Overview: This 207-nucleotide RNA was probed chemically with 2A3.
RNA sequence: GGGAACGACUCGAGUAGAGUCGAAAAAGCCAUACCAUUACGAUGGUAUGGCAAGUCCGUGACGGCGAUGGAUCCCGCCUGGCCGAUGCCGAACUGCCGAUCUGGCUGAUGGUUCCUGCCCCGUAAAAAAACGUAAAGCACUUCGGUGCUUUACGAACCUAAGGUGCCUGUUCGCAGGCACCUUAGGAAAAGAAACAACAACAACAAC
Reactivity to 2A3 in 0.01 (KOAc 150mM, MgCl2 10mM, bicine 150mM(pH8.5), 24C), signal-to-noise 1, nucleotides 027 to 156: a000g000c000c000a000u020a010c000c000a000u050u090a090c300g130a040u030g000g000u000a000u000g000g000c010a000a000g050u050c000c030g020u050g090a040c010g010g040c060g060a050u140g000g060a020u070c020c030c010g020c000c030u010g030g000c000c070g060a060u110g010c040c000g120a090a150c100u140g040c020c000g080a120u030c050u050g030g000c020u020g000a040u050g040g040u000u010c000c000u010g040c040c000c000c020g020u140a000a020a110a000a000a000a020c000g000u010a000a000a000g000c000a000c010u000u100c220g050g000u010g000c000u010u000u010a000c000g000a030a000